Chemical mapping of a 177-nucleotide RNA with 2A3 and DMS.

RNA sequence: GGGAACGACUCGAGUAGAGUCGAAAAGUGCUGACAGCCUGGAGAUAAUCGGCCUGCCCCAUGAUGCGAGCGACGUCUCGGCCGAACGCAUAACCACGGCUGUACGUGAUUUACUUGGGAAGGAGGCCAGAGUGACGCUGUUCGCAGCGUCACUCUGAAAAGAAACAACAACAACAAC
Reactivity to 2A3 in 0.01 (KOAc 150mM, MgCl2 10mM, bicine 150mM(pH8.5), 24C), signal-to-noise 1, nucleotides 027 to 126: g060u000g090c040u000g110a010c000a000g050c000c000u060g010g030a060g010a080u240a080a000u060c010g010g000c020c000u060g050c010c000c020c000a070u270g010a070u110g090c120g020a090g040c070g100a170c060g040u000c020u040c080g000g010c000c000g050a050a020c040g010c060a040u060a130a040c000c040a040c130g000g000c000u060g000u030a010c000g090u060g060a090u020u080u090a060c040u010u010g050g010g010a000a120g000g000a010g000g000c000
Reactivity to DMS in 0.01 (KOAc 150mM, MgCl2 10mM, bicine 150mM(pH8.5), 24C), signal-to-noise 2, nucleotides 027 to 126: g020u000g000c050u000g000a090c030a010g000c010c020u000g000g000a120g020a170u010a120a120u000c030g000g010c000c000u000g030c050c000c000c030a070u000g000a070u010g020c040g000a040g000c040g000a080c110g000u040c120u000c100g010g040c040c000g000a010a070c210g030c140a070u000a060a100c030c000a020c140g010g000c040u000g000u000a020c050g010u000g000a100u030u000u000a050c120u000u000g010g000g010a110a050g010g000a060g000g010c110
Annotation:
For DMS the reverse transcriptase was MarathonRT. The reactions ran in a buffer of 150 mM KOAc, 10 mM MgCl2 and 150 mM bicine (pH 8.5), at 24 C.